[RMDB]
RNA sequence: GGGAACGACUCGAGUAGAGUCGAAAAAGAUAUGGAGAAGCGGGAGCGACCCGUAGCGCAGAGAUAUGGGAUCGGAAACGAUCCCAUGUGUAGCUAUCGGUCGCGAAGAACGCUUCUCCUAAGUCAACCUGAUUUGGAAGUUCGCUUCCAAAUCAGGAAAAGAAACAACAACAACAAC
Reactivity to DMS in 0.01 (KOAc 150mM, MgCl2 10mM, bicine 150mM(pH8.5), 24C), signal-to-noise 1, nucleotides 027 to 126: a130g000a040u000a210u000g010g000a040g000a020a000g040c000g000g030g000a080g000c010g010a020c000c000c080g050u000a010g000c010g030c220a230g020a100g010a110u000a000u000g000g000g000a010u010c000g010g000a040a000a160c000g000a010u010c000c010c000a000u010g000u000g000u000a080g030c000u000a000u000c300g030g000u000c000g010c000g000a020a090g030a110a170c000g000c010u020u000c000u010c010c000u000a000a070g000u000c010a140a200
Overview:
An RNA of 177 nucleotides, treated with DMS and read out base by base. The data come from the RNA Mapping Database (RMDB), library TTRDES.